[RMDB]
RNA sequence: GGGAACGACUCGAGUAGAGUCGAAAAGGAGGAAGGAUGUCGAAACCGAGAGGUCCUGAGGAAUCGCUUUUUAGAGUGUGACUAACAGAUUGUGUUAGUGUUUACAGCCUCCGUAAACCACUCUUCAGAAACCUCAGGCGACAGUGACGGAGGCCCACGAUCUUCAGUAAUUCGUUACUGAAGAUCGAAAAGAAACAACAACAACAAC
Reactivity to DMS in 0.01 (KOAc 150mM, MgCl2 10mM, bicine 150mM(pH8.5), 24C), signal-to-noise 2, nucleotides 027 to 156: g020g020a070g010g000a090a040g000g000a090u000g030u010c050g000a120a130a090c030c020g000a200g000a170g000g010u000c000c000u000g000a050g030g020a020a280u000c010g000c160u000u000u010u010u000a060g010a040g040u000g000u010g020a090c000u000a020a010c020a050g010a160u010u010g010u000g020u000u010a010g020u000g000u010u000u010a000c010a010g010c020c000u000c010c000g000u000a050a040a080c040c020a060c020u000c010u000u010c160a110g000a070a070a300c010c000u000c010a020g000g020c110g000a060c130a100g020u000g010a120c060g040g020a070g010g050c030c030c080a220
Reactivity to 2A3 in 0.01 (KOAc 150mM, MgCl2 10mM, bicine 150mM(pH8.5), 24C), signal-to-noise 3, nucleotides 027 to 156: g050g020a010g010g000a020a030g030g010a050u040g010u040c020g040a090a030a050c020c010g010a030g000a010g050g010u030c000c000u010g000a000g020g010a000a030u010c010g010c070u140u090u030u050u090a000g000a000g000u010g000u100g110a020c010u000a000a000c000a080g160a300u190u160g080u010g000u040u000a000g000u000g000u010u010u010a000c000a000g010c000c010u010c000c010g000u000a010a000a000c010c000a000c000u000c000u070u060c040a020g020a000a010a010c000c000u000c000a000g000g000c000g000a000c010a020g060u060g070a020c030g010g020a020g000g000c000c030c000a070